Structure probing data (2A3 and DMS) for a 177-nucleotide construct. Values cover nucleotides 27 to 126. The RNA was probed in 150 mM KOAc, 10 mM MgCl2 and 150 mM bicine (pH 8.5) at 24 C. Source: RMDB library OK1LIB, as collected in RNAgym.
RNA sequence: GGGAACGACUCGAGUAGAGUCGAAAAUUUGUGGCAUUGAGGAUUGCCGAUGUAUGCCGACACGUCAUGUUGUAGGGGAGAUCAAGAAGGUGUGGUCGGCCUCUCGUUUUUGGCAAAAACUUGCGUGCUAUAUUUAUAUUUUCGAAUAUAAAUAUAGAAAAGAAACAACAACAACAAC
Reactivity to 2A3 in 0.01 (KOAc 150mM, MgCl2 10mM, bicine 150mM(pH8.5), 24C), signal-to-noise 4, nucleotides 027 to 126: u140u090u100g050u050g070g020c030a060u070u100g050a050g060g050a030u050u050g020c000c000g000a010u020g060u150a020u180g010c000c000g000a010c000a010c010g050u030c010a070u300g050u110u030g060u080a080g020g060g060g050a100g040a120u150c050a030a040g110a070a050g080g020u040g010u050g040g170u050c010g000g040c000c000u000c000u000c000g030u030u010u010u160u140g010g000c000a000a020a010a060a030c010u020u050g020c030g050u030g010
Reactivity to DMS in 0.01 (KOAc 150mM, MgCl2 10mM, bicine 150mM(pH8.5), 24C), signal-to-noise 2, nucleotides 027 to 126: u010u050u020g020u010g000g000c000a030u020u030g020a050g000g010a180u000u000g000c000c000g000a040u010g000u050a020u000g010c000c000g020a030c010a020c020g020u000c020a070u000g000u000u000g010u040a110g030g000g000g010a140g000a120u030c080a010a060g000a100a060g010g010u020g000u000g000g020u000c010g000g000c010c020u000c000u000c000g000u010u010u020u050u030g000g000c030a010a040a040a110a120c020u000u000g010c090g040u010g000